The record gives the reactivity of an RNA of 177 nucleotides to 2A3. For 2A3 the reverse transcriptase was SuperScript II with manganese. The reactions ran in a buffer of 150 mM KOAc, 10 mM MgCl2 and 150 mM bicine (pH 8.5), at 24 C. It was measured as part of the RMDB library VIROID. For 2A3, 1,687 sequencing reads were counted.

[RMDB]
RNA sequence: GGGAACGACUCGAGUAGAGUCGAAAAGGGGAGUGCCUCGCGGCCGACAGGAGUAAUUCCUGCUGAAACAGGGUUUUCACCCUUCCUUUCUUCAGGUUUCCUUCCUCGCGCCCGCAGGAUCACCCCUGGUGCAUAGAAAGUUCGCUUUCUAUGCACCAAAAGAAACAACAACAACAAC
Reactivity to 2A3 in 0.01 (KOAc 150mM, MgCl2 10mM, bicine 150mM(pH8.5), 24C), signal-to-noise 1, nucleotides 027 to 126: g060g010g000g000a080g060u130g070c010c020u050c120g000c020g000g020c000c000g010a040c140a080g000g010a010g000u010a000a000u070u000c000c000u000g010c010u000g000a000a020a070c300a170g040g040g000u090u040u290u300c130a060c000c000c000u000u030c010c000u000u020u010c000u000u010c000a000g000g000u000u000u030c000c000u010u000c010c010u000c000g010c120g030c020c000c000g010c010a000g000g030a050u170c030a100c010c030c020c010u000